[RMDB]
RNA sequence: GGGAACGACUCGAGUAGAGUCGAAAAGGUCGUCGAUCCGCCUCCAGCUUUGAGCCAGCGACGGCACCAGUUUGGCUCCGUCGCCGUUCGGCGAGGACAGAAAGUCGCGGCGGAUCAGCGUAUCGAACGCGAUCAGGGUAUUCGUACCCUGAUCGCGAAAAGAAACAACAACAACAAC
Reactivity to DMS in 0.01 (KOAc 150mM, MgCl2 10mM, bicine 150mM(pH8.5), 24C), signal-to-noise 1, nucleotides 027 to 126: g000g000u000c030g000u010c080g040a000u000c000c030g000c000c040u000c090c250a270g010c010u000u000u000g020a050g080c050c050a300g000c000g000a020c000g000g000c050a090c040c000a000g120u090u030u060g020g000c160u000c000c050g000u000c000g020c000c260g000u050u050c030g000g030c090g000a160g000g000a000c090a080g080a070a000a070g020u000c160g000c300g020g010c000g040g040a000u000c000a000g040c000g110u010a040u000c000g000a070a290
Reactivity to 2A3 in 0.01 (KOAc 150mM, MgCl2 10mM, bicine 150mM(pH8.5), 24C), signal-to-noise 2, nucleotides 027 to 126: g020g000u000c000g000u020c030g010a010u000c000c000g020c010c010u020c040c080a050g000c050u010u000u270g000a000g000c020c000a000g030c000g010a000c000g000g000c030a000c010c010a160g240u300u300u300g000g000c020u010c000c000g020u000c000g040c020c030g200u180u050c040g020g000c000g010a030g060g030a030c030a030g230a000a150a000g000u180c030g000c010g070g000c000g010g000a010u000c000a000g000c000g090u070a010u000c000g000a020a020
This 177-nucleotide RNA was probed chemically with DMS and 2A3. 2A3 adducts were read by reverse transcription with SuperScript II with manganese. The reactions ran in a buffer of 150 mM KOAc, 10 mM MgCl2 and 150 mM bicine (pH 8.5), at 24 C. The 2A3 profile rests on 1,033 reads. Source: RMDB library OK1LIB, as collected in RNAgym.